[RMDB]
RNA sequence: GGGAACGACUCGAGUAGAGUCGAAAAGAUAUGGACGUGAAGAGGACGUAUACGCGGUGGGUCGGAAACGACCCACGGCGUGCCAACUCUCACGUCCUAAGUCAAAAGCGUUAGUUCGCUAACGCAAGAUUCGCAAGAUCUUCGGAUCUUGCGAAUCAAAAGAAACAACAACAACAAC
Reactivity to DMS in 0.01 (KOAc 150mM, MgCl2 10mM, bicine 150mM(pH8.5), 24C), signal-to-noise 2, nucleotides 027 to 126: g000a020u000a020u000g000g000a010c000g000u010g000a070a030g030a030g020g010a300c250g030u000a090u020a020c020g020c000g020g070u000g010g020g010u000c000g030g000a020a000a020c000g070a010c000c010c010a000c000g010g020c000g030u000g050c140c230a010a060c010u000c000u000c000a000c000g020u000c010c000u000a000a060g000u000c020a090a030a080a110g010c000g020u010u000a030g020u000u020c220g000c000u010a030a020c000g020c010a090a120

Source: RMDB library TTRDES, as collected in RNAgym.
Chemical mapping of a 177-nucleotide RNA with DMS.
DMS adducts were read by reverse transcription with MarathonRT.